[RMDB]
RNA sequence: GGGAACGACUCGAGUAGAGUCGAAAACCUGUUAUCCGACCAAUAACAGAAUGCACCACAGCGUAAAAUCAUCUGAUUGGGUGAGUUGGUCGCACCGCCAUUUGACGAACGAACGCCAAGCCUAAGCACUACGAGUAUGUGUUCGCACAUACUCGAACUGGAAUUAUAUCUUCGGAUAUAAUUCCAGAAAAGAAACAACAACAACAAC
Reactivity to DMS in 0.01 (KOAc 150mM, MgCl2 10mM, bicine 150mM(pH8.5), 24C), signal-to-noise 4, nucleotides 027 to 156: c040c010u000g030u000u000a040u000c020c000g030a090c040c060a300a020u000a020a020c020a050g000a110a140u000g020c030a110c020c050a080c060a070g010c040g020u000a060a070a110a120u000c020a070u000c040u010g000a120u010u000g000g010g020u000g010a260g010u010u020g020g020u000c030g020c040a040c050c010g030c040c020a150u000u000u030g020a050c050g010a090a120c090g010a090a080c000g020c030c030a050a180g020c030c040u000a060a080g010c080a090c030u000a160c010g000a040g030u010a010u000g020u000g020u000u000c300g030c000a020c010a020u000a010c000u000c000g000a020a070
Reactivity to 2A3 in 0.01 (KOAc 150mM, MgCl2 10mM, bicine 150mM(pH8.5), 24C), signal-to-noise 9, nucleotides 027 to 156: c000c000u000g000u020u020a020u040c070c020g010a010c000c010a030a010u020a020a010c010a010g090a170a120u140g020c040a040c040c020a030c050a030g030c030g040u090a030a080a060a090u060c020a020u010c040u070g100a190u110u180g080g010g000u010g010a040g020u010u020g010g000u010c000g000c010a010c000c010g070c040c010a070u080u070u130g050a050c040g020a140a010c040g020a060a000c020g030c010c020a050a040g010c010c020u130a090a020g050c050a070c120u170a060c060g000a000g000u000a000u000g020u000g010u040u070c170g040c050a000c000a000u000a010c000u000c000g000a010a000